[RMDB]
RNA sequence: GGGAACGACUCGAGUAGAGUCGAAAAUGGGCGAUCGCUCGCUGUUUUUGUGGCUGGCUUUCAGCGGGCUGGAGGAGCCGGGAGCGGAGGCGGAGGGCCGAGCCAAAAACGUCAGCCGAGGCCGGGCAAUAUCGUGGACUGUUCGCAGUCCACGAAACUGAAUUCUUACGUUCGCGUAAGAAUUCAGAAAAGAAACAACAACAACAAC
Reactivity to 2A3 in 0.01 (KOAc 150mM, MgCl2 10mM, bicine 150mM(pH8.5), 24C), signal-to-noise 1, nucleotides 027 to 156: u070g020g020g020c050g050a070u080c060g030c010u000c000g000c030u010g020u040u030u020u100u050g130u090g010g000c010u000g020g010c030u010u060u080c000a010g000c010g000g020g000c000u030g020g020a040g040g010a020g030c060c090g050g010g000a050g020c060g020g030a010g010g030c090g040g060a110g030g040g000c000c070g020a040g020c030c020a060a000a040a000a000c000g020u040c010a020g000c040c000g010a050g010g000c020c000g030g000g010c020a060a040u030a050u140c010g010u000g000g000a010c000u010g030u040u080c150g010c130a010g000u000c010c000a000c000g000a000a000a000
An RNA of 207 nucleotides, treated with 2A3 and read out base by base. Values cover nucleotides 27 to 156. The reactions ran in a buffer of 150 mM KOAc, 10 mM MgCl2 and 150 mM bicine (pH 8.5), at 24 C. Source: RMDB library M2RFPK, as collected in RNAgym.